Structure probing data (2A3 and DMS) for a 207-nucleotide construct.
Conditions: 150 mM KOAc, 10 mM MgCl2 and 150 mM bicine (pH 8.5), 24 C.
[RMDB]
RNA sequence: GGGAACGACUCGAGUAGAGUCGAAAAUGAGCCACAAUGGGUGGGCACACAUGUCACCAUCAUUGAGUGGGGACAGCAGAAGCAGUGGAUGUGUACAUGAACAGCCAGAAAUUUAUCCUGACCACUGUGCAAAUGUGCAAAAUAUGCUUCUGGAGAACUAAUGGUCAUGAUUCGUCAUGACCAUUAGAAAAGAAACAACAACAACAAC
Reactivity to 2A3 in 0.01 (KOAc 150mM, MgCl2 10mM, bicine 150mM(pH8.5), 24C), signal-to-noise 4, nucleotides 027 to 156: u100g000a020g070c000c010a030c040a040a100u190g020g090g040u080g020g030g080c050a030c020a010c010a170u140g020u060c030a030c050c010a040u050c070a070u010u300g050a070g030u020g010g010g010g030a030c040a010g000c010a000g030a010a000g000c010a010g040u120g120g120a140u100g030u000g020u120a010c010a030u030g010a090a000c010a010g010c020c000a010g080a010a100a000u240u300u130a100u140c040c010u000g020a040c000c040a010c070u000g000u040g030c030a070a090a060u010g010u000g000c010a000a020a120a020u260a040u040g000c000u020u000c000u020g040g030a120g040a060a000
Reactivity to DMS in 0.01 (KOAc 150mM, MgCl2 10mM, bicine 150mM(pH8.5), 24C), signal-to-noise 2, nucleotides 027 to 156: u020g030a220g050c000c020a070c020a180a180u010g030g010g040u000g010g010g010c080a100c040a100c100a090u000g000u000c020a040c000c000a020u000c020a190u000u010g000a140g020u000g010g000g020g000a040c000a100g020c000a040g010a040a020g010c010a040g050u000g010g020a120u000g000u000g020u000a040c010a090u000g020a070a070c020a090g010c000c000a040g000a020a070a280u000u010u000a130u020c060c010u010g010a030c020c180a090c110u000g030u010g030c010a030a100a040u000g000u000g000c030a030a030a110a130u000a020u000g040c000u000u010c000u020g010g010a100g000a110a150
For 2A3, 2,641 sequencing reads were counted.